[RMDB]
RNA sequence: GGGAACGACUCGAGUAGAGUCGAAAAGAUAUGGAUCAUUUGGGAGUACCACCGGUCGGAAACGACCGUGCAGUACAUCGAUCAAAUGAGUCCUAAGUCGCAGCGUAAAGCAUGGUUCGCCAUGCAAGACAUAAAGGUCGUUCGCGACCUUUAUGUCAAAAGAAACAACAACAACAAC
Reactivity to DMS in 0.01 (KOAc 150mM, MgCl2 10mM, bicine 150mM(pH8.5), 24C), signal-to-noise 3, nucleotides 027 to 126: g000a030u000a030u010g000g000a260u000c010a000u000u000u000g000g000g000a020g020u010a010c000c040a080c160c120g000g050u000c010g000g000a020a030a030c010g020a000c000c030g000u000g000c300a090g010u000a010c020a300u000c140g010a010u020c000a010a000a000u010g010a030g000u010c000c000u000a010a070g000u000c010g040c160a140g010c150g010u010a040a110a130g010c010a010u000g000g000u000u010c250g000c000c010a010u000g000c010a050a030
Reactivity to 2A3 in 0.01 (KOAc 150mM, MgCl2 10mM, bicine 150mM(pH8.5), 24C), signal-to-noise 2, nucleotides 027 to 126: g010a010u020a000u060g010g000a010u010c010a020u000u000u010g010g020g000a010g000u000a010c030c000a020c080c130g020g000u000c000g000g000a000a000a000c020g000a000c000c010g000u020g020c060a010g010u020a000c040a100u300c120g000a010u000c000a020a000a000u020g000a010g250u100c000c000u000a000a000g000u000c020g080c130a080g090c100g220u300a140a200a010g010c010a000u010g050g010u020u100c240g050c080c000a000u000g000c010a010a040